[RMDB]
RNA sequence: GGGAACGACUCGAGUAGAGUCGAAAAGUGGCAGUCAUAUGAAGGGACGAAAAGUUUGCAAUAGAAGUCAUCAGGUUUGAAGAGGUGAUGUGGUGAAUGAAGAUGUGUUCCUUACAAACCGCUCCGCGUAUUGCUAAUCCUUCGGGAUUAGCAAUACAAAAGAAACAACAACAACAAC
Reactivity to DMS in 0.01 (KOAc 150mM, MgCl2 10mM, bicine 150mM(pH8.5), 24C), signal-to-noise 4, nucleotides 027 to 126: g030u000g010g010c050a030g010u010c040a070u000a100u000g010a090a080g030g020g000a050c060g000a050a060a110a140g010u000u000u020g020c070a070a100u000a080g000a090a140g000u000c030a040u010c050a110g000g010u000u000u000g020a070a110g000a070g020g010u010g000a060u000g010u000g010g000u000g000a050a030u000g010a070a060g020a080u010g010u000g020u000u000c000c010u000u000a090c110a040a060a090c080c030g010c080u000c040c040g020c250
Reactivity to 2A3 in 0.01 (KOAc 150mM, MgCl2 10mM, bicine 150mM(pH8.5), 24C), signal-to-noise 3, nucleotides 027 to 126: g060u070g020g000c000a020g030u060c020a040u070a040u190g050a070a030g010g000g020a000c020g020a000a030a030a120g070u070u090u070g000c020a010a050u060a240g120a140a030g030u030c000a020u010c040a050g130g050u120u200u200g120a110a050g060a010g030g040u040g020a040u090g070u070g080g000u020g050a040a040u040g030a060a040g030a100u090g080u020g010u110u030c000c000u000u070a070c010a030a080a000c020c030g020c020u010c010c000g060c010
This 177-nucleotide RNA was probed chemically with DMS and 2A3. The DMS profile rests on 3,623 reads. The 2A3 profile rests on 3,032 reads. Reactivities are given for positions 27 through 126. The data come from the RNA Mapping Database (RMDB), library OK2TST. 2A3 adducts were read by reverse transcription with SuperScript II with manganese.